An RNA of 177 nucleotides, treated with DMS and 2A3 and read out base by base. The reactions ran in a buffer of 150 mM KOAc, 10 mM MgCl2 and 150 mM bicine (pH 8.5), at 24 C. In probing experiments dimethyl sulfate is read out at A N1 and C N3, which are open when not base-paired. For DMS the reverse transcriptase was MarathonRT. Values cover nucleotides 27 to 126.
[RMDB]
RNA sequence: GGGAACGACUCGAGUAGAGUCGAAAACGCACUGGGCAUAAAACUCAUCAAUGCCUUUGUUAAACACCAGAUUGGCAUACAUCAACAGGCCAAUGGGAAUGGUCGGGUGUUUCUGGCGAAUCAGUGAGCCUACGCACCUAUUCGUAGGUGCGUAGGCAAAAGAAACAACAACAACAAC
Reactivity to DMS in 0.01 (KOAc 150mM, MgCl2 10mM, bicine 150mM(pH8.5), 24C), signal-to-noise 1, nucleotides 027 to 126: c110g050c030a010c090u000g000g000g000c030a050u010a040a040a070a210c150u000c110a120u000c200a050a080u000g000c070c010u000u010u000g050u000u020a040a060a140c090a030c030c010a100g000a030u000u000g030g040c010a070u000a040c150a070u000c050a070a100c300a190g000g000c000c050a020a040u000g060g030g000a160a030u000g000g010u000c000g000g020g000u000g010u000u000u000c040u000g000g010c070g000a050a100u000c060a180g000u000g010a120
Reactivity to 2A3 in 0.01 (KOAc 150mM, MgCl2 10mM, bicine 150mM(pH8.5), 24C), signal-to-noise 2, nucleotides 027 to 126: c030g000c030a020c080u060g020g020g010c020a020u080a070a300a070a060c070u100c100a090u050c060a100a020u060g000c000c000u090u020u020g030u020u060a070a030a010c010a020c020c010a050g020a090u030u060g100g000c010a020u090a170c010a060u120c010a070a160c020a090g000g060c000c030a000a020u090g050g040g000a050a130u050g010g010u050c000g000g030g000u040g010u000u050u030c070u000g050g000c040g030a030a030u090c020a020g010u020g080a020